[RMDB]
RNA sequence: GGGAACGACUCGAGUAGAGUCGAAAACACAAUGUGCGCCAUUAACAUUGUUUAUGCAAGCAUGUUUCGCAAUGUACGGCGCAGAAACAUUGCCAACACAAAUACGCUUCACGAUGUGCGGCACAGAAAAAGCUCGCGCACUUCGGUGCGCGAGCAAGCAAUCUUAGUACUUCGGUACUAAGAUUGCAAAAGAAACAACAACAACAAC
Reactivity to 2A3 in 0.01 (KOAc 150mM, MgCl2 10mM, bicine 150mM(pH8.5), 24C), signal-to-noise 2, nucleotides 027 to 156: c040a000c000a020a080u090g010u040g050c040g020c020c020a080u120u170a100a040c020a010u050u010g070u060u090u130a170u180g050c050a050a040g040c090a070u030g030u040u070u080c020g000c000a000a000u010g000u010a060c070g020g000c070g010c060a010g040a000a050a000c020a000u020u070g030c010c000a120a000c030a030c040a090a190a010u280a030c110g040c040u090u090c110a010c090g160a120u100g060u040g000c060g000g090c030a020c010a020g270a020a100a000a020a000g030c000u000c000g010c000g000c090a000c000u010u050c200g050g000u000g000c000g000c000g000a000g000c000a020a020